This 207-nucleotide RNA was probed chemically with 2A3.
For 2A3, 1,428 sequencing reads were counted.
The RNA was probed in 150 mM KOAc, 10 mM MgCl2 and 150 mM bicine (pH 8.5) at 24 C.

RNA sequence: GGGAACGACUCGAGUAGAGUCGAAAACUGCCUCUCUUUGUCGGUGAAUCCUCCCCUGGUGGGUCCCUUUCUAGGUCCGGAGUCUACUUCCAUUCGGUCCGUUCGGGGCCUCUUCGCCGGAGGGGCUCCUUCUCCAUCCUUAUCCUUUUUUCCAAUACGAUAUUUAAUUCUUCGGAAUUAAAUAUCGAAAAGAAACAACAACAACAAC
Reactivity to 2A3 in 0.01 (KOAc 150mM, MgCl2 10mM, bicine 150mM(pH8.5), 24C), signal-to-noise 3, nucleotides 027 to 156: c070u070g000c010c000u040c010u030c020u070u230u300g180u240c070g020g010u090g070a080a150u190c010c030u050c010c010c000c020u040g000g030u060g020g020g000u000c000c000c010u000u080u050c100u110a050g010g000u000c010c000g000g010a020g020u040c050u160a170c100u300u030c050c010a200u030u020c010g020g010u010c010c010g040u050u100c030g010g000g000g010c000c000u010c000u030u020c000g040c010c010g020g000a020g000g010g010g020c000u020c000c000u040u050c040u000c010c010a120u060c000c020u090u090a100u120c040c000u140u170u050u020u160u040c010c020a060a120u140a130